Structure probing data (2A3) for a 207-nucleotide construct. The 2A3 profile rests on 982 reads. Source: RMDB library RNAMAK, as collected in RNAgym.
[RMDB]
RNA sequence: GGGAACGACUCGAGUAGAGUCGAAAAGGGGUCUUGGGAUGGCAGCAUAAGCUUUUGACGAUCUGAAGCCUCCACGGAUCGAUAAGCUUAUGAACUACUGCCGCCCAAGACGGAGGCACCCAAAAGCAAUACAGCUGGUUCGCCAGCUGUAUUGCAAUCGAUAGGCGAAGUUCGCUUCGCCUAUCGAAAAAGAAACAACAACAACAAC
Reactivity to 2A3 in 0.01 (KOAc 150mM, MgCl2 10mM, bicine 150mM(pH8.5), 24C), signal-to-noise 1, nucleotides 027 to 156: g090g010g020g000u000c000u000u020g000g060g050a130u090g020g000c010a000g020c010a010u010a010a000g010c030u160u210u280u210g150a120c110g000a000u000c000u000g040a080a000g020c000c000u000c000c000a020c020g000g000a000u000c000g060a150u070a290a050g010c000u000u000a000u000g010a030a000c110u300a010c000u130g020c000c000g000c000c000c000a010a000g000a000c000g010g000a010g020g000c010a050c000c000c000a030a040a040a080g010c000a000a000u000a000c000a000g000c000u010g000g100u050u100c200g050c090c010a000g000c000u000g020u010a000u000u000g000c000a000a000